[RMDB]
Chemical mapping of a 177-nucleotide RNA with 2A3 and DMS.
Reactivities are given for positions 27 through 126.
Source: RMDB library TTRDEL, as collected in RNAgym.
For DMS the reverse transcriptase was MarathonRT.
The 2A3 profile rests on 4,341 reads.
The RNA was probed in 150 mM KOAc, 10 mM MgCl2 and 150 mM bicine (pH 8.5) at 24 C.

RNA sequence: GGGAACGACUCGAGUAGAGUCGAAAAGAUAUGGAGCAGUCCGAGCUGAAGUAUCGGAAACGAUACCAGCGAUGAGGAGCUGCUCCUAAGUCAAACUAUAACCAAGCCUUCGGGCUUGGUUAUAGAAGUAAACCGUAAGGUUCGCCUUACGGUUUACAAAAGAAACAACAACAACAAC
Reactivity to 2A3 in 0.01 (KOAc 150mM, MgCl2 10mM, bicine 150mM(pH8.5), 24C), signal-to-noise 2, nucleotides 027 to 126: g000a000u020a010u070g000g000a010g050c000a000g040u060c030c060g010a020g000c000u010g070a300a020g050u010a000u000c010g010g030a030a010a000c000g000a010u000a010c000c000a000g010c040g160a300u280g050a050g000g000a100g070c010u000g010c010u000c000c000u010a020a000g000u000c020a080a060a050c000u010a000u000a010a010c000c000a010a000g000c000c030u100u170c300g060g040g000c000u000u000g010g000u010u000a000u000a000g000a000a000
Reactivity to DMS in 0.01 (KOAc 150mM, MgCl2 10mM, bicine 150mM(pH8.5), 24C), signal-to-noise 4, nucleotides 027 to 126: g000a020u010a200u020g000g020a020g010c010a010g010u000c000c010g010a090g010c000u000g000a190a140g000u000a010u000c000g010g000a030a050a110c000g020a010u000a000c000c010a000g010c000g020a090u010g000a210g000g000a150g000c010u000g000c010u000c000c000u000a000a080g000u000c040a150a150a290c000u000a000u000a000a000c000c000a010a000g000c010c000u000u010c270g030g010g020c000u000u000g000g000u000u000a000u010a000g010a070a140